The record gives the reactivity of an RNA of 177 nucleotides to 2A3 and DMS. The data come from the RNA Mapping Database (RMDB), library OK2TST. For DMS, 53,583 sequencing reads were counted. The RNA was probed in 150 mM KOAc, 10 mM MgCl2 and 150 mM bicine (pH 8.5) at 24 C. The 2A3 profile rests on 38,405 reads.

[RMDB]
RNA sequence: GGGAACGACUCGAGUAGAGUCGAAAACGUGGCCUGGCUGUGGUGGAUGCCGGGGAGUACUCGUGUGUGUGCGGGCAGGAGAGGACCUCAGCCACACUCACUGUCAGGGCCCUGCCUGCCAGAUUCACGAUAAUUUAGAAUUCGUUCUAAAUUAUCGAAAAGAAACAACAACAACAAC
Reactivity to 2A3 in 0.01 (KOAc 150mM, MgCl2 10mM, bicine 150mM(pH8.5), 24C), signal-to-noise 9, nucleotides 027 to 126: c040g040u080g060g030c010c010u010g020g000c020u040g020u060g080g070u040g040g070a080u120g020c030c010g000g010g000g000a030g050u070a080c040u030c120g040u040g010u020g000u000g040u070g080c040g010g030g000c020a020g010g080a100g010a070g030g130a080c000c010u020c010a010g040c050c010a060c010a010c020u100c020a030c020u030g060u100c040a030g010g030g000c010c000c000u030g030c000c000u010g000c000c000a060g050a150u120u140c080a030
Reactivity to DMS in 0.01 (KOAc 150mM, MgCl2 10mM, bicine 150mM(pH8.5), 24C), signal-to-noise 9, nucleotides 027 to 126: c100g020u000g010g010c030c020u000g010g010c020u010g010u000g010g020u000g010g020a130u000g010c040c040g010g010g000g000a100g010u010a110c060u000c060g020u010g010u010g010u000g010u010g020c050g010g000g010c030a030g000g000a130g010a100g010g010a130c020c010u000c050a080g010c050c130a120c090a060c090u000c070a100c040u000g010u000c080a070g010g000g010c030c040c010u000g000c010c000u000g010c010c040a070g000a110u000u000c090a180